[RMDB]
An RNA of 177 nucleotides, treated with 2A3 and DMS and read out base by base. Values cover nucleotides 27 to 126. The reactions ran in a buffer of 150 mM KOAc, 10 mM MgCl2 and 150 mM bicine (pH 8.5), at 24 C. The DMS profile rests on 2,556 reads. The 2A3 profile rests on 4,122 reads.
RNA sequence: GGGAACGACUCGAGUAGAGUCGAAAAGAAAGAAAGAAAGAUGGGUUCUUGAUAGUACUGGCAUAUGGACAUUGUUGUAAUAAUCUUACUCUCAAUGUUCAUCUGUCCGUACUGCCAAGUGCCUGAAAUAUCACAGCGGUUUCGACCGCUGUGAUAUAAAAGAAACAACAACAACAAC
Reactivity to 2A3 in 0.01 (KOAc 150mM, MgCl2 10mM, bicine 150mM(pH8.5), 24C), signal-to-noise 4, nucleotides 027 to 126: g100a040a040a020g110a030a070a020g120a070a110a020g160a110u290g000g010g000u030u010c000u000u000g000a000u000a000g000u000a000c000u000g000g000c010a010u000a000u010g000g000a000c000a010u000u000g020u000u010g020u010a020a050u050a110a110u070c040u040u030a010c020u060c010u000c070a000a000u000g000u020u000c000a000u000c000u000g010u000c000c000g000u000a000c000u000g000c000c000a000a000g000u000g020c000c000u000g010a040a040
Reactivity to DMS in 0.01 (KOAc 150mM, MgCl2 10mM, bicine 150mM(pH8.5), 24C), signal-to-noise 2, nucleotides 027 to 126: g010a070a120a070g000a090a060a060g020a060a120a030g000a170u040g000g010g010u000u000c010u010u000g000a000u010a010g000u000a000c000u000g000g000c010a000u000a000u000g000g000a000c000a010u000u000g000u020u010g040u020a030a000u060a120a140u040c300u000u000a020c000u020c070u000c000a000a000u000g000u000u000c010a020u020c000u000g040u000c000c060g020u000a000c000u000g030c020c000a010a000g080u000g010c000c000u010g020a060a050